The data come from the RNA Mapping Database (RMDB), library M2PK50. The record gives the reactivity of an RNA of 177 nucleotides to 2A3 and DMS. For DMS the reverse transcriptase was MarathonRT. For DMS, 794 sequencing reads were counted.

RNA sequence: GGGAACGACUCGAGUAGAGUCGAAAAGAGGAGUCAUUCGUGACUCCUCAAAGGGAGCUGAACUCUCCCGCUCAAGUCCGAGAGCCUUCGGACCCAAAAGAAUGCUGUUCCUGUUCGCAGGAACAAAGAUGGUUGAGCAAUUCGUUGCUCAACCAUCAAAAGAAACAACAACAACAAC
Reactivity to 2A3 in 0.01 (KOAc 150mM, MgCl2 10mM, bicine 150mM(pH8.5), 24C), signal-to-noise 1, nucleotides 027 to 126: g010a000g000g000a000g000u010c010a010u100u110c120g110u080g000a000c000u000c000c000u000c000a000a010a000g020g000g010a010g030c110u140g080a020a020c020u000c000u000c050c000c000g020c020u030c040a080a070g020u000c000c000g010a000g010a070g230c000c030u060u010c010g000g000a000c010c020c000a070a120a000a000g170a070a080u240g000c040u060g030u010u000c020c000u000g020u020u040c270g000c050a000g020g010a000a000c000a030a000a000
Reactivity to DMS in 0.01 (KOAc 150mM, MgCl2 10mM, bicine 150mM(pH8.5), 24C), signal-to-noise 1, nucleotides 027 to 126: g000a010g000g000a000g000u000c050a050u010u020c200g010u000g010a050c000u000c000c000u010c010a010a080a110g000g000g010a010g000c170u000g000a100a210c300u000c000u000c000c010c000g010c030u000c040a140a140g000u000c000c000g000a030g000a070g010c090c120u000u000c010g000g000a060c020c130c020a050a080a110a110g030a130a040u000g000c160u000g010u010u000c000c000u000g000u000u000c240g020c010a000g030g020a000a000c030a010a020a120

Reactivities are rounded to 0.1 and cut off at 0 and 3.